[RMDB]
RNA sequence: GGGAACGACUCGAGUAGAGUCGAAAAUGCACUAUUGUGUUAUUAGUAACUAAGUAAGCUUACAAUCGAAAAUGUUUAACCAUAAAAGGGUAAAAUGGUGUAAGACAGUCUGAUACUAACUGCAAAAAAAACCCCUGGUCCUUCGGGACCAGGGGAACAUCGAUACUUUCUUCGGAAAGUAUCGAUGAAAAGAAACAACAACAACAAC
Reactivity to 2A3 in 0.01 (KOAc 150mM, MgCl2 10mM, bicine 150mM(pH8.5), 24C), signal-to-noise 1, nucleotides 027 to 156: u060g030c020a010c070u110a160u280u300g020u030g060u070u040a070u100u000a000g010u010a050a230c140u010a080a070g060u010a200a000g030c000u040u000a010c020a090a180u130c040g110a030a030a010a120u080g020u100u050u050a060a000c000c000a010u180a130a170a060a080g060g030g000u120a070a100a000a060u080g010g000u010g000u060a020a000g000a000c000a020g030u030c040u040g000a090u020a040c010u010a100a040c070u030g010c040a140a040a080a000a000a000a170a180c050c000c010c000u000g000g010u000c010c040u050u180c270g070g000g000a000c000c000a000g010g000g000g000a000a000
Overview:
The record gives the reactivity of an RNA of 207 nucleotides to 2A3. It was measured as part of the RMDB library M2RFPK.